This 207-nucleotide RNA was probed chemically with 2A3.

RNA sequence: GGGAACGACUCGAGUAGAGUCGAAAAUUUAUACAUUAGGCACGGACAUACGGUCCUCCUGUGCAAAUAAUGUACAUAACUCACAAACGUCCUGCUUAUCAUCAAGCACUUCAACUUAUCAUCAAACACCUCUGCUGACAGAAGAAUGCAAGCAAGAAUCGACUACUGACUUCGGUCAGUAGUCGAUAAAAGAAACAACAACAACAAC
Reactivity to 2A3 in 0.01 (KOAc 150mM, MgCl2 10mM, bicine 150mM(pH8.5), 24C), signal-to-noise 1, nucleotides 027 to 156: u000u000u040a080u000a030c000a000u000u100a030g040g000c000a000c030g000g000a050c030a070u300a100c140g200g000u030c000c010u010c000c000u000g010u010g000c040a210a300a000u010a000a000u090g000u000a060c010a090u120a060a080c000u000c010a030c030a180a260a110c040g010u000c000c010u000g020c030u030u090a020u120c070a090u060c010a020a020g030c000a040c080u030u020c110a170a090c000u010u250a070u220c030a060u040c020a080a120a160c060a010c000c030u040c030u080g000c000u110g010a020c010a130g050a080a080g020a030a000u060g040c040a010a010g020c040a070a000g060a020
Annotation: The reactions ran in a buffer of 150 mM KOAc, 10 mM MgCl2 and 150 mM bicine (pH 8.5), at 24 C. For 2A3 the reverse transcriptase was SuperScript II with manganese.